[RMDB]
RNA sequence: GGGAACGACUCGAGUAGAGUCGAAAAAUCACGAGAUGACAGUCGAACUAGACACCGGCGCAGGUAAUUGUUCGUAUCGCCUGCACAGUGUGUCUAAUGCGUGUCACUGAAUUGACGCGGAUUCAGCGUUAGUACUUAAUUUCGAUUAAGUACUAACAAAAGAAACAACAACAACAAC
Reactivity to 2A3 in 0.01 (KOAc 150mM, MgCl2 10mM, bicine 150mM(pH8.5), 24C), signal-to-noise 9, nucleotides 027 to 126: a000u110c060a050c080g090a060g040a140u100g030a040c020a020g070u100c030g030a050a040c030u000a010g000a000c000a000c000c000g070g010c110g000c030a000g010g010u070a140a110u130u170g130u270u150c100g050u150a100u100c050g000c000c000u000g070c020a020c030a060g120u160g000u000g000u130c000u000a010a010u080g020c040g010u030g010u010c010a010c040u050g050a040a070u070u060g020a020c030g010c050g070g020a030u070u020c040a010g020c010
Reactivity to DMS in 0.01 (KOAc 150mM, MgCl2 10mM, bicine 150mM(pH8.5), 24C), signal-to-noise 9, nucleotides 027 to 126: a090u010c040a070c080g010a140g000a090u010g000a050c030a050g000u020c030g000a070a050c100u000a010g000a010c020a000c000c020g010g000c080g000c010a010g000g020u000a080a060u010u020g010u050u040c250g000u010a060u000c120g010c000c000u000g000c000a020c030a070g010u050g010u000g000u000c000u000a000a020u010g000c030g010u000g000u000c020a060c070u020g010a090a070u030u010g010a100c100g000c100g000g000a090u000u000c060a060g010c260